[RMDB]
RNA sequence: GGGAACGACUCGAGUAGAGUCGAAAAGCUGGUCCGGCUUGGCCCCAGCGAACACUUGACGAACGGUUAGUCCCGUCUUGUGGAUUAGGACGUUCUAGGUCCGGUCUGCCCCCUAGUUCGUCCGAAACGUCAGCUGGAGUUUCGACUCCAGCUGACGAAAAGAAACAACAACAACAAC
Reactivity to DMS in 0.01 (KOAc 150mM, MgCl2 10mM, bicine 150mM(pH8.5), 24C), signal-to-noise 2, nucleotides 027 to 126: g000c000u000g000g010u050c060c010g020g000c160u010u010g000g030c100c080c000c240a050g030c110g080a150a100c080a000c010u010u000g030a020c020g010a150a070c100g000g030u000u170a110g030u020c070c040c020g000u040c040u000u000g000u010g000g000a100u000u000a200g000g000a020c000g000u000u000c010u000a010g000g000u030c210c260g000g000u090c040u000g000c030c000c190c000c000u030a000g010u000u000c000g000u000c000c000g050a020a010a060
Reactivity to 2A3 in 0.01 (KOAc 150mM, MgCl2 10mM, bicine 150mM(pH8.5), 24C), signal-to-noise 2, nucleotides 027 to 126: g010c000u000g060g100u070c100c060g020g120c030u100u090g150g040c000c040c000c000a020g010c020g020a100a020c040a000c010u020u040g000a020c050g010a140a110c090g050g110u170u190a020g080u260c000c080c000g000u000c000u020u050g010u050g040g050a130u050u190a060g000g000a000c000g000u000u000c000u000a000g000g010u060c010c070g030g000u110c100u060g210c000c000c000c000c000u000a010g020u000u000c000g010u000c000c010g000a000a010a000